[RMDB]
RNA sequence: GGGAACGACUCGAGUAGAGUCGAAAAGGUCAAGUAUGAGCCAAACCCGGUCUAUGAGGGCGUGCGCACUGCGCGGCUGCGCAUGGAGGAGAGCGGGUCCGGCCUCCGCCACGAUCUCUCAAACGGCGUAAUAUCCAGUAUUCGUACUGGAUAUUACAAAAGAAACAACAACAACAAC
Reactivity to DMS in 0.01 (KOAc 150mM, MgCl2 10mM, bicine 150mM(pH8.5), 24C), signal-to-noise 9, nucleotides 027 to 126: g020g020u000c030a100a170g010u010a070u000g010a210g020c010c020a040a100a200c040c010c010g020g010u000c040u010a270u010g010a050g010g000g010c040g020u000g000c070g010c020a100c150u000g000c040g010c030g010g010c240u010g010c010g010c010a050u000g020g010a090g000g000a060g000a080g020c030g010g000g010u000c060c070g010g010c020c010u000c010c020g000c020c010a060c060g000a080u000c020u000c010u000c020a040a060a140c190g000g010c160
Reactivity to 2A3 in 0.01 (KOAc 150mM, MgCl2 10mM, bicine 150mM(pH8.5), 24C), signal-to-noise 9, nucleotides 027 to 126: g010g010u050c020a030a080g070u070a270u260g040a040g060c020c000a030a040a080c010c000c010g010g070u040c030u040a150u080g030a040g020g020g040c020g010u030g000c090g010c050a060c100u100g010c070g010c030g090g200c120u160g000c010g000c010a020u070g060g050a030g040g000a050g000a020g050c050g020g040g010u030c030c030g050g000c000c000u000c010c010g000c010c010a030c040g020a090u020c020u000c010u010c040a060a050a050c070g050g000c040
Conditions: 150 mM KOAc, 10 mM MgCl2 and 150 mM bicine (pH 8.5), 24 C. Structure probing data (DMS and 2A3) for a 177-nucleotide construct. The 2A3 profile rests on 25,586 reads. For 2A3 the reverse transcriptase was SuperScript II with manganese. The data come from the RNA Mapping Database (RMDB), library OK2TRN.